[RMDB]
RNA sequence: GGGAACGACUCGAGUAGAGUCGAAAAACGUCGACGCCGAUGGCACGAGUAUCACCGGCCACCACCUACCUCGUGUAAGGGCUCGCUGGUGCACCGGCGACCACAUGGUCUCCCUAUGGGAAGCGAAGCACCUGGCUUCGUUCGCGAGGCCAGGUGCAAAAGAAACAACAACAACAAC
Reactivity to DMS in 0.01 (KOAc 150mM, MgCl2 10mM, bicine 150mM(pH8.5), 24C), signal-to-noise 3, nucleotides 027 to 126: a140c110g000u000c060g000a100c080g010c000c000g010a170u020g040g050c030a050c020g000a070g010u010a060u060c080a100c060c010g000g000c160c020a050c090c030a050c000c000u000a080c090c000u020c080g010u030g020u000a100a070g030g000g000c100u000c160g020c010u000g000g020u050g000c130a050c040c070g000g000c020g020a070c040c020a070c060a040u010g000g000u010c060u000c010c000c020u030a050u020g000g000g000a090a090g050c050g010a050a090
Reactivity to 2A3 in 0.01 (KOAc 150mM, MgCl2 10mM, bicine 150mM(pH8.5), 24C), signal-to-noise 6, nucleotides 027 to 126: a000c060g040u040c010g040a070c030g010c010c010g080a120u080g040g020c060a030c090g050a040g040u110a060u190c030a020c050c000g020g000c030c010a050c000c010a060c010c010u060a040c010c020u110c060g060u100g030u130a090a140g020g030g000c070u020c030g000c040u020g020g000u070g050c040a070c050c010g010g010c000g050a070c030c000a080c010a070u140g040g020u030c040u020c030c010c020u060a130u150g040g030g030a050a030g040c060g030a060a040

Record summary:
An RNA of 177 nucleotides, treated with DMS and 2A3 and read out base by base. For 2A3, 5,339 sequencing reads were counted. 2A3 is a SHAPE reagent: it acylates the 2'-hydroxyl of flexible nucleotides of all four kinds. Values cover nucleotides 27 to 126. Values are in units of 0.01, from 0 to 300, in steps of 10.